[RMDB]
Record summary: The record gives the reactivity of an RNA of 177 nucleotides to 2A3 and DMS. DMS (dimethyl sulfate) methylates the pairing face of unpaired adenines and cytosines. For DMS, 47,593 sequencing reads were counted. For 2A3, 49,888 sequencing reads were counted. The RNA was probed in 150 mM KOAc, 10 mM MgCl2 and 150 mM bicine (pH 8.5) at 24 C. For 2A3 the reverse transcriptase was SuperScript II with manganese.
RNA sequence: GGGAACGACUCGAGUAGAGUCGAAAAACGCGCAUGUGUGUCAUGUCCUGAUUGCGUACUGUCCUACAGUACGCAAACGGCUUCUGUAGGACAGAGGCCUCAGGUAGUCGGAAACACUGAUUAGCGAGGUCAGCAUUCUAUUCGUAGAGUGCUGACCAAAAGAAACAACAACAACAAC
Reactivity to 2A3 in 0.01 (KOAc 150mM, MgCl2 10mM, bicine 150mM(pH8.5), 24C), signal-to-noise 7, nucleotides 027 to 126: a000c020g010c000g000c010a030u060g020u010g000u000g040u060c000a020u040g030u020c000c000u020g010a040u000u060g000c000g000u010a010c000u010g030u120c030c010u050a030c000a000g000u000a000c000g000c000a000a000a000c030g010g000c000u000u000c000u000g040u040a090g050g140a010c000a000g000a000g000g000c000c000u010c000a000g000g000u010a020g050u030c050g020g010a050a040a000c030a010c020u020g010a070u030u050a020g000c010g010a030
Reactivity to DMS in 0.01 (KOAc 150mM, MgCl2 10mM, bicine 150mM(pH8.5), 24C), signal-to-noise 9, nucleotides 027 to 126: a080c030g020c010g000c040a030u000g010u010g020u000g010u000c020a070u010g010u000c010c010u000g000a220u000u000g010c000g020u000a020c000u000g000u000c130c090u000a130c010a000g010u000a010c030g010c010a000a010a110c160g010g000c010u000u000c000u000g010u000a100g020g040a300c010a010g000a020g000g010c000c050u000c010a000g000g010u000a050g000u000c080g000g000a110a100a000c090a040c010u000g000a080u000u000a110g020c020g000a140